[RMDB]
RNA sequence: GGGAACGACUCGAGUAGAGUCGAAAACAGCACGCCAUGAGGACAUUGCGGCGGAAACCCGCAGCAGGCACACGGAGUGAGGAAGGUAGACAUGUUCACGAUUGCCGCAGUUCUCGUUGCGGUGGUCCCGCACGAGUAAUUUCGAUUACUCGUGCGGAAAAGAAACAACAACAACAAC
Reactivity to 2A3 in 0.01 (KOAc 150mM, MgCl2 10mM, bicine 150mM(pH8.5), 24C), signal-to-noise 7, nucleotides 027 to 126: c050a010g080c030a020c030g020c010c010a040u050g020a080g040g040a030c070a110u090u200g000c010g020g000c020g050g000a100a050a030c010c020c010g010c000a020g020c010a000g080g000c030a020c010a010c100g070g020a070g050u090g040a050g040g040a070a030g060g000u080a020g020a060c070a120u140g050u080u050c040a030c110g030a050u000u190g000c000c000g000c010a000g010u050u030c030u010c030g010u000u000g010c020g040g120u030g020g010u020c000
Reactivity to DMS in 0.01 (KOAc 150mM, MgCl2 10mM, bicine 150mM(pH8.5), 24C), signal-to-noise 3, nucleotides 027 to 126: c130a110g020c090a100c030g020c010c040a070u000g010a060g000g020a050c030a040u030u020g010c030g000g000c040g020g000a080a120a190c170c000c020g030c070a090g020c050a050g000g010c050a050c120a080c040g000g000a090g000u000g000a110g010g000a100a040g000g000u010a080g000a040c060a090u010g010u000u000c040a030c100g000a060u010u020g010c050c000g000c000a090g000u010u000c000u000c020g000u010u000g000c070g000g040u000g000g000u020c050
The record gives the reactivity of an RNA of 177 nucleotides to 2A3 and DMS. The 2A3 profile rests on 6,769 reads. Source: RMDB library OK1LIB, as collected in RNAgym. For 2A3 the reverse transcriptase was SuperScript II with manganese. DMS adducts were read by reverse transcription with MarathonRT. For DMS, 4,645 sequencing reads were counted. Conditions: 150 mM KOAc, 10 mM MgCl2 and 150 mM bicine (pH 8.5), 24 C.